RNA sequence: GGGAACGACUCGAGUAGAGUCGAAAAGUUCGACCGUUCGCGGUCGAACAAAAUAAAACAGUACAUAGCCUCGCGUAAGCGUUGUACUGAAAGGCUAAGAAAAAACGAUAUGGUUCGCCAUAUCGAACGAUACUCGGAAGUUCGCUUCCGAGUAUCGAAAAGAAACAACAACAACAAC
Reactivity to DMS in 0.01 (KOAc 150mM, MgCl2 10mM, bicine 150mM(pH8.5), 24C), signal-to-noise 2, nucleotides 027 to 126: g010u000u000c000g030a000c000c000g040u000u010c190g030c030g040g000u000c000g000a000a000c000a010a060a040a010u000a060a080a180a090c050a010g010u000a010c020a080u010a300g000c020c040u000c090g050c200g000u040a090a140g010c010g010u000u000g020u000a000c000u010g000a000a010a100g010g000c060u010a060a180g000a000a020a060a100a110a130c000g020a010u000a000u000g000g000u000u010c260g010c010c000a010u000a000u000c000g010a010a030
Reactivity to 2A3 in 0.01 (KOAc 150mM, MgCl2 10mM, bicine 150mM(pH8.5), 24C), signal-to-noise 2, nucleotides 027 to 126: g000u000u000c000g000a020c020c000g000u010u040c260g000c010g060g000u020c050g000a000a000c020a000a040a000a000u060a000a060a000a010c020a000g030u000a020c010a030u070a050g060c000c000u080c060g080c040g120u140a070a060g000c020g000u020u020g000u000a000c010u000g070a040a010a000g120g030c060u150a170a070g130a050a170a020a010a000a020c000g010a000u010a000u010g000g020u030u060c160g070c050c000a010u010a000u000c000g000a020a010
The record gives the reactivity of an RNA of 177 nucleotides to DMS and 2A3.
For 2A3 the reverse transcriptase was SuperScript II with manganese.
The 2A3 profile rests on 2,202 reads.
The reactions ran in a buffer of 150 mM KOAc, 10 mM MgCl2 and 150 mM bicine (pH 8.5), at 24 C.